[RMDB]
RNA sequence: GGGAACGACUCGAGUAGAGUCGAAAAUUAGUGCAUGGGCGUGUUGAGUCAUCAGCACCAAAUGAUUUGCGAGAGUUGGUGUCUGCUAUAAUAACGAGAAGUGAAGAAGUUAUUAGUCGAGGUGGAGCGAUUACCUGUGUUUCGACACAGGUAAUCGAAAAGAAACAACAACAACAAC
Reactivity to 2A3 in 0.01 (KOAc 150mM, MgCl2 10mM, bicine 150mM(pH8.5), 24C), signal-to-noise 2, nucleotides 027 to 126: u060u030a000g030u020g090c010a030u020g010g060g010c050g010u050g010u090u090g030a040g090u070c040a060u010c010a070g050c000a020c000c000a000a040a130u170g070a130u070u030u080g060c110g020a050g010a020g110u000u160g020g020u020g020u000c010u020g030c010u020a020u020a190a080u040a040a040c010g020a010g000a300a060g110u120g130a050a060g050a050a000g070u040u100a050u050u060a060g030u040c060g030a030g000g010u010g010g050a040g000
Reactivity to DMS in 0.01 (KOAc 150mM, MgCl2 10mM, bicine 150mM(pH8.5), 24C), signal-to-noise 3, nucleotides 027 to 126: u010u000a110g000u010g010c050a060u000g010g010g040c110g030u000g020u010u010g010a090g010u020c220a070u010c030a020g010c010a050c030c020a040a070a070u010g010a100u000u000u010g010c090g020a050g010a110g030u000u000g020g010u000g000u000c060u000g010c140u000a070u010a050a040u010a040a090c050g010a130g000a070a100g030u010g000a090a080g020a120a120g010u000u000a030u000u010a070g000u010c090g000a070g000g000u000g010g000a110g000